[RMDB]
RNA sequence: GGGAACGACUCGAGUAGAGUCGAAAAGGCUUUCAAACCCGUCGGUCACAUGGAAUCCGGUCGCGUAGAUGAUCACAUCCGCUGGACGCUUCUCGCCGUUCCGUGACACGAUCGCGUCCUCGGUUAAGGAUCACUAUGCUUUCGAGCAUAGUGAUCCAAAAGAAACAACAACAACAAC
Reactivity to DMS in 0.01 (KOAc 150mM, MgCl2 10mM, bicine 150mM(pH8.5), 24C), signal-to-noise 2, nucleotides 027 to 126: g010g010c150u000u000u010c140a100a080a130c030c010c060g010u010c060g000g020u000c040a090c060a070u000g030g040a120a070u000c170c060g020g010u000c060g060c030g010u000a060g020a120u000g000a100u000c060a080c080a130u000c030c040g010c200u000g020g000a040c010g000c010u000u020c070u000c030g040c110c060g000u000u010c040c060g030u000g010a050c020a090c050g020a030u000c170g010c020g000u000c010c010u000c100g010g010u000u020a100a170
Reactivity to 2A3 in 0.01 (KOAc 150mM, MgCl2 10mM, bicine 150mM(pH8.5), 24C), signal-to-noise 2, nucleotides 027 to 126: g030g020c060u110u210u170c110a080a080a110c020c010c000g020u020c020g040g040u010c030a020c020a070u150g020g080a070a030u020c040c030g060g010u190c020g010c000g020u050a050g000a210u040g010a080u030c050a020c000a160u050c020c030g030c150u040g060g000a010c000g000c000u070u000c030u030c080g020c030c040g060u110u000c020c040g070u060g010a030c040a020c110g020a040u060c050g000c020g020u040c010c020u010c040g080g000u040u060a120a010